[RMDB]
RNA sequence: GGGAACGACUCGAGUAGAGUCGAAAAGAUAUGGACAUAAGGGAGCUGCGUAUCGGAAACGAUACAGCAGCUUUGAUCUUACUAGUCCUAAGUCAAACUGUCUUGUGUGUUCGCACACAAGACAGAACUCACCAAAACACUUCGGUGUUUUGGUGAGAAAAGAAACAACAACAACAAC
Reactivity to DMS in 0.01 (KOAc 150mM, MgCl2 10mM, bicine 150mM(pH8.5), 24C), signal-to-noise 1, nucleotides 027 to 126: g000a040u000a010u000g000g000a010c000a250u000a020a010g000g000g000a000g080c000u000g000c010g020u000a000u000c000g030g020a020a000a010c010g010a000u000a000c010a060g010c000a000g000c000u000u000u000g000a090u000c000u000u000a010c260u000a090g000u000c000c010u000a000a090g000u000c000a130a140a300c000u000g010u000c000u000u000g020u000g010u020g000u000u010c240g030c000a000c000a000c000a000a010g000a000c000a000g020a010a100
Notes:
Structure probing data (DMS) for a 177-nucleotide construct. Conditions: 150 mM KOAc, 10 mM MgCl2 and 150 mM bicine (pH 8.5), 24 C. DMS (dimethyl sulfate) methylates the pairing face of unpaired adenines and cytosines.